RNA sequence: GGGAACGACUCGAGUAGAGUCGAAAAUGACACUGACUACGACACUCAGAACAGUGUCUCAGUCCUGGACGCUCACACUGUCAGAUAUGCAAGAACAGGAUCCGCUCAGUGUAUGACUCAGUUUGUACGUCCGUCAUGUAUUCGUACAUGACGGACGAAAAGAAACAACAACAACAAC
Reactivity to 2A3 in 0.01 (KOAc 150mM, MgCl2 10mM, bicine 150mM(pH8.5), 24C), signal-to-noise 3, nucleotides 027 to 126: u130g000a000c010a000c010u020g010a000c020u050a050c090g030a010c020a020c020u110c080a080g060a300a050c020a060g010u000g000u000c000u020c030a010g030u000c000c020u020g000g050a020c060g020c010u070c030a050c030a020c060u110g120u120c050a060g060a160u110a030u260g030c030a060a070g030a270a030c010a020g000g050a020u030c020c060g020c060u010c000a010g010u020g020u010a050u080g020a030c010u000c070a080g070u020u150u170g120u120a040
Reactivity to DMS in 0.01 (KOAc 150mM, MgCl2 10mM, bicine 150mM(pH8.5), 24C), signal-to-noise 3, nucleotides 027 to 126: u000g000a030c020a020c000u000g010a080c120u000a150c150g000a040c080a050c070u000c150a120g040a150a160c270a020g030u000g000u000c000u010c150a080g000u010c030c010u000g000g000a130c140g010c070u000c130a060c120a060c120u020g030u000c090a130g000a170u020a090u010g000c060a110a080g000a030a160c030a040g000g000a030u020c130c120g000c140u000c010a000g010u000g000u000a030u010g000a120c030u000c040a150g030u000u000u000g010u000a100

Conditions: 150 mM KOAc, 10 mM MgCl2 and 150 mM bicine (pH 8.5), 24 C. Chemical mapping of a 177-nucleotide RNA with 2A3 and DMS. For 2A3, 2,736 sequencing reads were counted. For 2A3 the reverse transcriptase was SuperScript II with manganese.